[RMDB]
RNA sequence: GGGAACGACUCGAGUAGAGUCGAAAAGAUAGAAAGAAAGAAAUCUGACAGAAUGACGGAUUCGAUCGUUGUGGUCGGCGGGCCACCACGUCAUUCCUUCGCACUGUCUCCGGGCAGACCGCCAUAAAAAAGCGGAUCUACUUCGGUAGAUCCGCAAGCAUAUGAGACACUUCGGUGUCUCAUAUGCAAAAGAAACAACAACAACAAC
Reactivity to 2A3 in 0.01 (KOAc 150mM, MgCl2 10mM, bicine 150mM(pH8.5), 24C), signal-to-noise 1, nucleotides 027 to 156: g030a020u100a010g080a000a110a020g130a010a060a010g060a000a040a030u030c060u090g000a000c010a040g140a170a190u090g040a050c000g010g030a060u140u090c130g030a090u270c040g020u010u030g000u000g020g000u000c000g050g090c030g030g020g000c000c000a000c040c000a000c000g000u000c010a020u030u000c000c000u040u100c050g030c050a050c040u040g020u000c000u000c030c110g050g000g030c010a030g000a120c030c020g020c030c020a070u300a020a240a000a040a010a000g010c000g010g010a000u000c000u000a000c010u010u050c000g050g000u000a000g000a010u000c000c000g000c000a000a000

Structure probing data (2A3) for a 207-nucleotide construct. Source: RMDB library M2RFPK, as collected in RNAgym.